[RMDB]
RNA sequence: GGGAACGACUCGAGUAGAGUCGAAAAACAGUGCUGAUAAAGACAUACCCAAGAGACUGGGUGAUUUAUAAAGAAAAAGAGGUUUAGUGGAGUCACAGUUCCACGUGGCUGGGGAGGCCUCACAAUCAUGGUGGAAGGCGAAAGGCACUUCUUACAACCAUACUACGGUGUUCGCACCGUAGUAUGGAAAAGAAACAACAACAACAAC
Reactivity to 2A3 in 0.01 (KOAc 150mM, MgCl2 10mM, bicine 150mM(pH8.5), 24C), signal-to-noise 2, nucleotides 027 to 156: a000c070a030g030u050g100c030u070g000a080u140a050a070a000g060a010c040a050u140a040c000c010c000a020a030g140a000g030a120c220u070g000g000g030u010g060a040u000u190u070a150u050a070a050a050g090a010a030a020a010a000g040a030g040g050u110u150u210a060g040u090g130g000a040g050u100c060a060c000a140g080u070u020c010c000a010c000g020u050g000g000c010u040g000g020g010g000a020g000g090c000c000u020c000a020c050a010a050u230c030a060u100g020g000u000g020g050a070a070g000g020c020g020a040a050a080g020g030c020a000c000u010u000c000u000u070a010c020a060a060
The data come from the RNA Mapping Database (RMDB), library OK3TST. An RNA of 207 nucleotides, treated with 2A3 and read out base by base. High 2A3 reactivity points to a flexible backbone, as in loops and unpaired stretches. The RNA was probed in 150 mM KOAc, 10 mM MgCl2 and 150 mM bicine (pH 8.5) at 24 C. 2A3 adducts were read by reverse transcription with SuperScript II with manganese. The 2A3 profile rests on 688 reads.